Chemical mapping of a 177-nucleotide RNA with DMS and 2A3. Values cover nucleotides 27 to 126. For 2A3 the reverse transcriptase was SuperScript II with manganese.
RNA sequence: GGGAACGACUCGAGUAGAGUCGAAAACGCCAGUGGCAGGUGCUCGGUACGUUAUGUGCUGAGUCGCAAGCUAUAAGCGCACAUGCGAUGCGCGUCGCUGCGCGGGACAGAAUCCGCCAACCUAGCAUCUAGGCAAGCGCUUCGGUGCUUGUCUAGAAAAAGAAACAACAACAACAAC
Reactivity to DMS in 0.01 (KOAc 150mM, MgCl2 10mM, bicine 150mM(pH8.5), 24C), signal-to-noise 9, nucleotides 027 to 126: c070g010c020c060a100g020u010g000g010c020a060g000g020u010g000c000u000c000g010g010u000a010c010g010u020u050a080u070g020u000g010c000u000g000a020g000u010c060g020c020a070a060g000c020u010a070u020a090a150g000c010g010c020a050c060a190u030g010c130g000a090u010g000c020g010c030g010u010c120g000c020u010g000c110g010c010g010g000g000a030c160a100g000a120a130u020c030c020g010c040c060a080a080c060c030u010a050g000c120a140
Reactivity to 2A3 in 0.01 (KOAc 150mM, MgCl2 10mM, bicine 150mM(pH8.5), 24C), signal-to-noise 9, nucleotides 027 to 126: c050g040c020c010a040g030u060g080g000c040a030g010g040u030g020c000u010c000g010g000u010a010c030g090u180u300a150u300g010u010g000c000u010g000a010g010u060c010g000c010a040a040g000c010u060a030u040a260a030g000c020g030c010a010c000a060u250g110c090g130a130u030g000c010g000c010g020u020c020g000c020u030g000c030g000c000g010g000g000a030c040a070g110a040a040u020c010c010g010c030c020a050a050c020c010u020a020g040c010a070
Annotation
The data come from the RNA Mapping Database (RMDB), library OK1LIB.